[RMDB]
RNA sequence: GGGAACGACUCGAGUAGAGUCGAAAAUAACUCACGAAGGGAGCUUGAAGUGGUUUCCUGGCCCUCGAAAUAAGCAGCAGAGGGGACGAGCGGUAUAGAAUACCGGUCUUGUGAACAUCAGAGGAUGCAAAGUACGAUAGUUCGCUAUCGUACUUUGAAAAGAAACAACAACAACAAC
Reactivity to 2A3 in 0.01 (KOAc 150mM, MgCl2 10mM, bicine 150mM(pH8.5), 24C), signal-to-noise 3, nucleotides 027 to 126: u020a010a000c010u000c030a010c040g030a060a020g010g000g030a010g010c040u070u100g170a200a110g130u130g110g000u020u010u010c000c000u000g070g000c010c020c000u000c020g050a040a040a040u190a110a040g070c100a010g010c030a010g000a010g000g000g010g020a030c220g000a010g020c000g000g030u030a050u030a070g300a300a010u020a030c000c000g030g120u020c000u030u060g020u020g010a070a030c000a010u040c010a010g100a090g300g000a000u010g030
Reactivity to DMS in 0.01 (KOAc 150mM, MgCl2 10mM, bicine 150mM(pH8.5), 24C), signal-to-noise 6, nucleotides 027 to 126: u010a100a100c080u010c010a070c070g010a100a040g010g000g000a020g000c020u000u000g030a100a130g010u000g010g010u000u000u010c010c010u000g010g010c020c010c020u000c010g000a050a070a050u010a120a130g000c170a080g010c180a140g000a040g020g010g010g010a030c120g000a040g010c020g000g000u000a020u000a130g010a060a300u000a010c010c010g000g010u000c010u010u000g000u000g000a060a140c080a040u010c050a120g000a120g010g000a060u010g010
Description
This 177-nucleotide RNA was probed chemically with 2A3 and DMS. The reactions ran in a buffer of 150 mM KOAc, 10 mM MgCl2 and 150 mM bicine (pH 8.5), at 24 C. The 2A3 profile rests on 2,787 reads. For DMS, 4,584 sequencing reads were counted. It was measured as part of the RMDB library RFMREP.